[RMDB]
RNA sequence: GGGAACGACUCGAGUAGAGUCGAAAAUGCCUGAGACCAUGGGGCAGGCCAGGCCCUGGGCACUUCGUGUUGAACCUGCUGUCUAUACCAUGACAUGCCUCCCUCCUAGAGGGCCAGGGAAAUAGGACGAUUUACACUCAUUCGUGAGUGUAAAUCGAAAAGAAACAACAACAACAAC
Reactivity to 2A3 in 0.01 (KOAc 150mM, MgCl2 10mM, bicine 150mM(pH8.5), 24C), signal-to-noise 1, nucleotides 027 to 126: u110g080c040c000u040g040a060g040a060c000c070a020u060g000g000g130g000c020a000g010g010c040c000a020g000g010c000c000c000u000g010g050g000c080a050c060u130u060c200g080u080g080u080u180g050a110a110c010c010u010g000c000u020g030u010c050u090a140u030a140c020c070a030u060g030a030c030a040u170g080c000c000u040c000c000c020u000c000c020u050a020g000a010g000g050g020c030c020a040g020g000g030a010a020a070u130a030g050g000a000
Reactivity to DMS in 0.01 (KOAc 150mM, MgCl2 10mM, bicine 150mM(pH8.5), 24C), signal-to-noise 3, nucleotides 027 to 126: u020g010c010c010u000g020a120g000a090c090c040a060u010g010g000g000g000c040a040g010g000c060c030a070g000g000c020c000c010u000g010g010g020c020a060c050u010u010c180g000u000g000u000u010g010a090a140c030c040u000g000c030u010g010u000c060u010a140u000a300c090c100a060u020g020a080c080a080u000g000c030c030u000c020c030c080u010c010c050u010a090g000a050g010g000g020c040c030a020g010g000g000a040a070a080u010a030g000g000a160